[RMDB]
RNA sequence: GGGAACGACUCGAGUAGAGUCGAAAAAAUCCGUCAGCUAUAACGCUGUCAAGAAAACCCCAAAACCGUAAAAUGAGAGCAAUUCGCCUGGUUCCUCUUUAAAGUCAAACCAGGAGGCUCCGCCGGACGUAAGGGAGGGGUUCGCCCCUCCCUUACGAAAAGAAACAACAACAACAAC
Reactivity to 2A3 in 0.01 (KOAc 150mM, MgCl2 10mM, bicine 150mM(pH8.5), 24C), signal-to-noise 3, nucleotides 027 to 126: a010a010u100c050c010g030u040c000a000g000c000u010a030u030a300a080c190g000c000u000g060u030c000a050a000g050a050a060a010a010c000c000c000c000a080a150a000a100c030c000g110u150a010a060a130a040u250g030a080g010a000g190c020a060a180u160u140c100g030c050c000u010g000g000u020u040c070c010u070c030u110u170u290a180a100a040g050u040c050a010a000a000c000c000a000g000g000a000g030g000c000u010c000c000g020c030c030g030g000a020
Reactivity to DMS in 0.01 (KOAc 150mM, MgCl2 10mM, bicine 150mM(pH8.5), 24C), signal-to-noise 2, nucleotides 027 to 126: a140a080u000c080c070g000u000c020a070g010c020u000a180u010a170a080c180g010c040u000g080u000c030a180a070g010a050a020a030a160c030c010c000c020a110a120a040a200c030c050g000u020a120a110a100a100u030g000a050g010a000g000c000a190a070u030u060c100g020c050c000u010g040g000u000u000c170c050u000c060u000u000u020a020a060a030g030u000c290a170a040a000c020c020a000g050g000a100g010g000c000u000c000c000g010c050c010g000g000a120